This 177-nucleotide RNA was probed chemically with DMS and 2A3.
Reactivities are given for positions 27 through 126.

RNA sequence: GGGAACGACUCGAGUAGAGUCGAAAAGAAAGUGGAAUUGCCGUCGCUCAACGGAUAAAAGGUACCUUAGGGAUAACAGGCUGAUCACGCCCAAGAGUUCAUAUCGACGGCGUGGUUUGGCACCUCGGGAACGAAAAGGGUUCGCCCUUUUCGUUCCAAAAGAAACAACAACAACAAC
Reactivity to DMS in 0.01 (KOAc 150mM, MgCl2 10mM, bicine 150mM(pH8.5), 24C), signal-to-noise 2, nucleotides 027 to 126: g030a110a140a140g000u000g020g000a110a010u020u050g000c010c010g020u000c120g040c040u000c000a090a130c140g000g000a010u000a060a100a160a030g000g000u020a050c000c030u000u010a090g000g020g040a040u000a030a010c110a040g000g020c080u000g000a010u000c000a000c030g000c000c000c000a040a230g010a070g010u000u000c290a070u050a180u030c010g000a300c300g000g000c000g070u010g000g000u000u000u010g000g010c000a070c020c000u000c160g000
Reactivity to 2A3 in 0.01 (KOAc 150mM, MgCl2 10mM, bicine 150mM(pH8.5), 24C), signal-to-noise 3, nucleotides 027 to 126: g040a010a060a010g100u140g070g050a050a190u210u110g010c000c010g040u060c040g010c060u030c010a060a020c020g020g000a010u140a030a150a030a030g040g010u060a050c010c010u030u090a010g020g000g020a040u040a130a020c040a080g110g000c000u000g000a010u020c000a000c010g000c020c010c000a030a010g000a000g030u090u300c150a030u160a090u210c040g020a010c010g030g000c010g000u000g000g000u030u010u040g000g000c020a010c010c000u060c040g030